[RMDB]
RNA sequence: GGGAACGACUCGAGUAGAGUCGAAAAGCUCAAUUUUAGCCCCCACAUCAAGGCUGAUGUGACAAUGAUCCCCAGCGAUCUGUUCACCUUGCUUGCCACUAGCAAGAGUGCGGAGGGCGGCCUCGGCCACGAGGGAAGUAUUCGUACUUCCCUCGUGAAAAGAAACAACAACAACAAC
Reactivity to 2A3 in 0.01 (KOAc 150mM, MgCl2 10mM, bicine 150mM(pH8.5), 24C), signal-to-noise 4, nucleotides 027 to 126: g020c010u010c100a180a160u090u100u140u260a060g020c020c000c010c010c000a020c000a010u030c020a060a020g300g000c120u030g020a010u020g010u010g000a010c040a040a150u190g010a040u010c020c020c010c020a020g010c030g040a010u000c010u010g060u060u040c010a000c000c000u000u000g000c000u010u050g130c050c030a110c120u030a000g010c000a000a010g050a030g050u030g010c000g000g020a080g040g010g020c010g020g000c010c030u050c050g030g000c010
Reactivity to DMS in 0.01 (KOAc 150mM, MgCl2 10mM, bicine 150mM(pH8.5), 24C), signal-to-noise 9, nucleotides 027 to 126: g010c040u000c110a090a090u000u000u010u010a130g010c010c000c020c040c010a030c040a030u000c020a070a140g010g020c190u010g010a020u000g010u000g010a060c090a070a090u000g000a040u000c010c010c080c180a090g010c100g000a030u000c010u000g000u000u010c010a020c010c010u000u000g000c010u000u010g010c070c080a080c150u000a040g000c010a010a010g000a110g030u000g010c250g010g000a110g010g010g020c010g010g010c050c050u000c120g010g000c090
An RNA of 177 nucleotides, treated with 2A3 and DMS and read out base by base.
It was measured as part of the RMDB library OK2TST.
Values cover nucleotides 27 to 126.